RNA sequence: GGGAACGACUCGAGUAGAGUCGAAAAGAUAUGGAGCGUGGACAUGCCUCAUGGCUCGGAAACGAGCCAUAGGCAACAGCCACCUCCUAAGUCAAAACUAUGUAUAUCGUUCGCGAUAUACAUAGAAGGAAAGAUAAGCGUUCGCGCUUAUCUUUCCAAAAGAAACAACAACAACAAC
Reactivity to 2A3 in 0.01 (KOAc 150mM, MgCl2 10mM, bicine 150mM(pH8.5), 24C), signal-to-noise 1, nucleotides 027 to 126: g040a000u060a030u130g000g010a020g000c170g070u010g000g020a090c070a150u070g000c010c000u090c120a050u010g010g010c000u000c000g030g050a090a070a000c000g000a000g060c060c000a000u000a000g010g000c000a040a000c010a010g030c000c000a000c010c000u020c000c000u010a160a030g070u040c050a000a010a150a170c000u010a000u010g010u000a010u010a000u010c010g000u060u030c300g010c010g140a000u000a000u000a000c000a000u010a010g010a050a030
Reactivity to DMS in 0.01 (KOAc 150mM, MgCl2 10mM, bicine 150mM(pH8.5), 24C), signal-to-noise 1, nucleotides 027 to 126: g000a060u010a300u000g000g060a020g010c280g000u000g000g010a100c060a250u000g020c020c000u000c240a000u010g000g000c000u020c000g020g000a040a090a210c000g000a020g040c000c000a000u000a000g000g000c010a030a060c260a140g000c000c000a010c000c000u010c000c020u000a030a030g030u000c050a140a110a140a240c020u000a000u000g000u000a000u000a000u000c000g000u010u010c270g000c000g010a020u000a000u000a000c000a000u000a000g000a150a130